An RNA of 207 nucleotides, treated with 2A3 and read out base by base.

RNA sequence: GGGAACGACUCGAGUAGAGUCGAAAACAUUUGAUCUGACACCUUUCACUGAGUCUUGAGAAGGUGAUGACUCUCAAAAGAUGAUGGUCUUUGUUCAAGGAUGCUAAGCUAGUAACCUAAAAGAUUAUUGGUACAUAUUACUUGAAAACAAUAUGAAGUAAUGCGUGGGAUUCGUCCCACGCAUUACAAAAGAAACAACAACAACAAC
Reactivity to 2A3 in 0.01 (KOAc 150mM, MgCl2 10mM, bicine 150mM(pH8.5), 24C), signal-to-noise 2, nucleotides 027 to 156: c040a040u080u050u140g050a030u030c100u060g050a020c010a010c000c000u050u080u110c050a060c050u100g100a040g050u090c070u070u110g030a110g000a050a060g000g010u010g000a010u020g000a000c000u000c000u010c060a070a090a010a070g070a040u090g000a010u020g030g000u000c010u020u000u030g050u000u040c030a040a000g020g000a010u010g000c060u030a050a110g030c010u030a000g010u020a130a000c040c030u050a060a070a070a030g030a000u020u070a020u010u070g010g000u050a000c010a030u140a050u010u040a100c040u040u060g030a010a060a030a040c030a030a030u130a030u180g070a090a000